[RMDB]
RNA sequence: GGGAACGACUCGAGUAGAGUCGAAAAACUGUUGUUCUUUUGGUUUGCACUAGGAUGCAAAAGAAAGAAAUCCCUGCGCUUUCUGUCUGUCUUUGUGGCGGCCCAGAUUGAAUUGGGGAAUACAUCUCAUAGUGUGAUCAUUCGUGAUCACACUAUGAAAAGAAACAACAACAACAAC
Reactivity to 2A3 in 0.01 (KOAc 150mM, MgCl2 10mM, bicine 150mM(pH8.5), 24C), signal-to-noise 7, nucleotides 027 to 126: a000c060u030g010u020u010g010u010u020c000u020u040u050u050g180g020u040u050u050g010c010a030c050u140a210g160g130a270u020g010c010a030a000a000a020g070a020a110a000g040a020a050a020u030c010c000c000u020g020c060g000c010u020u020u000c000u000g040u000c000u020g020u000c040u030u160u220g200u300g060g000c010g010g010c060c070c020a020g020a050u000u030g050a070a100u080u080g010g000g010g020a000a020u140a070c020a080u030c010u000
Reactivity to DMS in 0.01 (KOAc 150mM, MgCl2 10mM, bicine 150mM(pH8.5), 24C), signal-to-noise 3, nucleotides 027 to 126: a120c120u010g010u010u000g010u000u000c030u000u000u000u000g010g030u000u010u000g000c000a010c070u020a110g020g000a170u000g000c020a050a010a070a300g000a000a020a010g010a090a120a120u010c020c000c010u020g020c300g020c010u000u000u000c010u000g020u010c020u010g000u000c020u000u020u000g070u010g010g000c020g000g030c170c300c020a020g010a050u000u010g000a070a060u030u010g000g000g000g000a040a050u040a050c170a070u010c050u010